An RNA of 177 nucleotides, treated with DMS and 2A3 and read out base by base.
It was measured as part of the RMDB library OK1LIB.
For DMS, 31,912 sequencing reads were counted.
The reactions ran in a buffer of 150 mM KOAc, 10 mM MgCl2 and 150 mM bicine (pH 8.5), at 24 C.
RNA sequence: GGGAACGACUCGAGUAGAGUCGAAAAGUGACUGAGAAACAGUCGCCACGAGCGGCGAUUUACCGGAGUGAGUAUGUGCUAGCAGGAAGUAAGACGAUAACGGUGAUCGGUACGAACUCAUAGGACGAGAUUCAUACAAUUUCGAUUGUAUGAAUCUAAAAGAAACAACAACAACAAC
Reactivity to DMS in 0.01 (KOAc 150mM, MgCl2 10mM, bicine 150mM(pH8.5), 24C), signal-to-noise 9, nucleotides 027 to 126: g010u010g010a050c030u000g000a200g000a140a110a130c080a030g010u000c000g010c000c040a100c170g010a100g010c060g000g010c020g000a040u010u000u020a040c030c020g010g010a090g010u010g000a110g000u000a050u030g010u000g010c020u000a060g020c050a060g000g010a050a050g010u000a070a070g010a080c050g020a080u040a060a110c040g000g000u010g000a050u010c020g010g010u010a000c050g010a070a070c070u000c050a090u020a080g000g010a110c170g010
Reactivity to 2A3 in 0.01 (KOAc 150mM, MgCl2 10mM, bicine 150mM(pH8.5), 24C), signal-to-noise 6, nucleotides 027 to 126: g070u060g020a020c010u030g010a020g100a170a150a020c020a010g000u010c010g000c010c010a080c060g070a060g020c040g020g000c020g040a050u030u020u120a060c000c010g010g000a040g030u050g020a030g010u060a040u070g030u010g000c010u010a010g010c020a010g000g050a070a010g020u060a050a030g040a010c020g010a030u030a120a010c010g010g010u020g010a010u020c010g000g020u020a010c010g000a040a010c000u000c010a030u080a050g020g040a020c050g020